[RMDB]
RNA sequence: GGGAACGACUCGAGUAGAGUCGAAAAGAUAUGGAGAGAACAACAACAGCAUACUGGCUCGGAAACGAGCUUAUGACAUGUUGACUCCUAAGUCAUGGAUGCUGACGUGUUCGCACGUCAGCAUCAAGUGCUAACAUUCGUUCGCGAAUGUUAGCACAAAAGAAACAACAACAACAAC
Reactivity to DMS in 0.01 (KOAc 150mM, MgCl2 10mM, bicine 150mM(pH8.5), 24C), signal-to-noise 2, nucleotides 027 to 126: g000a020u000a300u030g000g010a010g000a130g000a150a100c210a120a080c080a040a020c090a050g000c020a030u000a000c300u000g030g000c000u000c010g000g000a100a100a130c030g000a010g000c020u000u000a000u000g010a080c100a110u010g000u000u000g010a230c000u000c000c000u000a120a160g000u000c020a120u000g000g010a010u000g010c010u020g000a020c020g000u000g030u000u010c150g010c000a000c000g010u000c000a000g010c000a000u000c000a030a090
Reactivity to 2A3 in 0.01 (KOAc 150mM, MgCl2 10mM, bicine 150mM(pH8.5), 24C), signal-to-noise 2, nucleotides 027 to 126: g060a030u180a060u210g030g000a030g010a050g110a170a140c040a080a000c000a000a020c010a100g050c000a010u060a060c120u180g060g010c000u000c010g000g000a040a080a020c000g000a000g000c000u010u000a020u020g060a070c130a160u050g020u000u020g070a120c020u000c030c010u000a120a040g070u020c050a110u180g160g000a000u000g000c010u020g000a000c040g000u030g050u080u120c300g040c130a000c020g020u020c020a020g000c000a000u010c000a000a000
About this RNA:
Conditions: 150 mM KOAc, 10 mM MgCl2 and 150 mM bicine (pH 8.5), 24 C. Chemical mapping of a 177-nucleotide RNA with DMS and 2A3. For DMS the reverse transcriptase was MarathonRT. For 2A3, 2,333 sequencing reads were counted. Values cover nucleotides 27 to 126.